[RMDB]
The data come from the RNA Mapping Database (RMDB), libraries RFM100 and RFMREP. Chemical mapping of a 177-nucleotide RNA with DMS and 2A3.
RNA sequence: GGGAACGACUCGAGUAGAGUCGAAAACUGUUGAAAAGCAGCAUCAUUGAAGGUGAAAAUCCUGUAGAUGAUAUGGACUACCAGUGCAUUUGUGAUACGGUUUCUAAGAGUCGAGUUGUUUGGGAAUUCUACCUUUCAGAUUCGUCUGAAAGGUAGAAAAAGAAACAACAACAACAAC
Reactivity to DMS in 0.01 (KOAc 150mM, MgCl2 10mM, bicine 150mM(pH8.5), 24C), signal-to-noise 2, nucleotides 027 to 126: c050u000g010u000u010g000a230a030a080a100g010c030a040g020c140a030u000c000a060u000u000g000a130a030g020g000u000g000a140a060a110a130u010c020c000u030g000u000a180g000a000u000g000a010u000a080u000g000g000a080c060u010a060c080c030a050g040u000g040c070a040u000u020u050g000u020g040a070u020a070c050g000g030u000u050u010c020u000a050a020g010a140g000u020c010g000a280g000u000u000g000u010u000u000g010g000g020a180a070u040
Reactivity to 2A3 in 0.01 (KOAc 150mM, MgCl2 10mM, bicine 150mM(pH8.5), 24C), signal-to-noise 1, nucleotides 027 to 126: c000u000g070u100u000g080a020a020a000a000g000c010a000g050c030a020u000c010a000u020u040g080a050a000g000g000u040g040a020a020a020a020u010c000c000u080g000u100a000g000a000u000g020a000u030a050u120g030g020a060c020u020a010c060c090a070g030u050g020c040a070u040u070u230g180u190g050a000u020a080c020g000g020u070u070u000c030u030a060a010g000a050g040u040c000g020a000g030u000u000g040u000u040u110g010g040g070a080a100u000
Description
The reactions ran in a buffer of 150 mM KOAc, 10 mM MgCl2 and 150 mM bicine (pH 8.5), at 24 C.